[RMDB]
RNA sequence: GGGAACGACUCGAGUAGAGUCGAAAAGAUAUGGAAUCCCGAAGGUCGAUAAGCAGCUGUCGGAAACGACAGGCUGCUUUUGACGACCUAGGGAUUCCUAAGUCAAACAUCGUCUUCGGACGAUGAAGAAUGGUAAGUUGUUCGCAACUUACCAUUCAAAAGAAACAACAACAACAAC
Reactivity to 2A3 in 0.01 (KOAc 150mM, MgCl2 10mM, bicine 150mM(pH8.5), 24C), signal-to-noise 2, nucleotides 027 to 126: g010a010u060a030u160g000g030a000a000u000c050c020c000g030a240a100g000g000u020c030g040a070u010a180a000g020c000a000g000c010u010g020u020c000g040g040a090a050a080c020g000a000c040a010g080g020c000u010g000c000u010u000u000u000g020a010c000g000a010c000c000u000a010g000g000g000a000u000u000c000c000u000a000a020g000u000c010a000a070a090c000a010u000c000g010u000c000u040u030c080g160g000a000c010g010a000u000g000a030a010
Reactivity to DMS in 0.01 (KOAc 150mM, MgCl2 10mM, bicine 150mM(pH8.5), 24C), signal-to-noise 6, nucleotides 027 to 126: g010a040u000a300u010g000g000a020a020u000c000c000c000g010a190a190g000g000u000c010g020a130u000a020a020g020c000a010g000c000u000g020u000c000g010g000a140a100a160c010g010a010c000a020g030g020c000u000g000c000u000u000u000u000g000a240c100g010a010c000c000u010a260g000g020g000a010u000u000c000c000u010a010a060g010u010c020a190a110a300c020a000u000c000g010u010c010u000u020c260g040g010a010c000g000a010u000g000a100a130